[RMDB]
RNA sequence: GGGAACGACUCGAGUAGAGUCGAAAACUUUGCGCCGCCAGUGAUGCGCUGGUAUCAGAUGCGGCGGCGUGAGUGGAUGCCUCCGAUGCUGAUGACGAGGCGGCUGUUGCGCUGGCCGCUGCUGUACCGUUAAAAUCGCUUUCGAGCGAUUUUAACGAAAAGAAACAACAACAACAAC
Reactivity to DMS in 0.01 (KOAc 150mM, MgCl2 10mM, bicine 150mM(pH8.5), 24C), signal-to-noise 4, nucleotides 027 to 126: c040u000u020u030g010c030g010c020c020g010c050c080a160g020u010g010a060u010g010c050g000c130u030g010g020u020a020u000c000a060g010a210u010g010c040g000g010c020g010g000c010g020u000g000a020g000u020g000g000a130u010g000c010c010u000c010c030g010a140u010g010c150u020g000a070u000g000a300c300g000a090g000g020c030g000g010c010u000g010u000u010g000c020g010c010u000g000g030c010c010g000c000u000g020c050u010g000u030a070c070
Reactivity to 2A3 in 0.01 (KOAc 150mM, MgCl2 10mM, bicine 150mM(pH8.5), 24C), signal-to-noise 5, nucleotides 027 to 126: c000u100u080u170g030c060g010c000c030g020c030c050a100g030u080g090a090u100g030c060g050c140u050g100g030u070a070u140c040a020g060a210u180g060c010g010g000c020g000g000c000g000u000g010a030g000u100g030g020a040u050g020c000c000u000c030c010g020a030u130g020c090u190g050a220u100g030a040c030g000a030g020g000c000g010g000c010u040g030u150u060g000c040g000c040u020g160g010c000c010g000c040u050g020c010u020g030u040a070c000